[RMDB]
Notes:
An RNA of 177 nucleotides, treated with 2A3 and DMS and read out base by base. For 2A3 the reverse transcriptase was SuperScript II with manganese. The DMS profile rests on 12,786 reads. Source: RMDB library OK1LIB, as collected in RNAgym. Values cover nucleotides 27 to 126.
RNA sequence: GGGAACGACUCGAGUAGAGUCGAAAAGAAAAACAGGAAGAACCAUUGCUCUCAUACACCCCAUUGUAUUGGGUGGCUUGUUCUUUUAUACAUUGUGGGCAGGUUACUUAGGAUGUCCUCAAAGAAAAUCAGUACUACCUUUCGAGGUAGUACUGAUAAAAGAAACAACAACAACAAC
Reactivity to 2A3 in 0.01 (KOAc 150mM, MgCl2 10mM, bicine 150mM(pH8.5), 24C), signal-to-noise 7, nucleotides 027 to 126: g120a010a080a010a000a010c050a050g120g010a040a030g010a030a000c030c030a050u040u180g020c000u000c000u000c020a000u030a050c030a050c030c040c000c020a060u070u140g090u100a090u070u120g040g000g050u040g020g000c030u030u020g020u040u000c010u040u090u050u030a170u030a080c100a130u050u060g020u050g010g000g020c010a010g060g040u120u070a080c020u050u030a070g120g100a090u060g040u010c000c000u050c020a050a070a040g120a030a060a010
Reactivity to DMS in 0.01 (KOAc 150mM, MgCl2 10mM, bicine 150mM(pH8.5), 24C), signal-to-noise 6, nucleotides 027 to 126: g010a030a080a070a130a090c120a120g010g010a030a040g020a050a050c040c110a080u020u000g010c010u000c010u010c020a050u010a070c040a110c080c020c000c080a110u020u010g000u020a110u010u000g000g000g040u010g000g010c110u010u010g000u000u010c060u010u010u050u010a100u030a090c110a080u020u000g000u010g000g010g000c000a030g010g020u010u020a060c100u010u030a100g000g000a140u020g010u000c010c000u000c090a020a030a090g010a090a070a110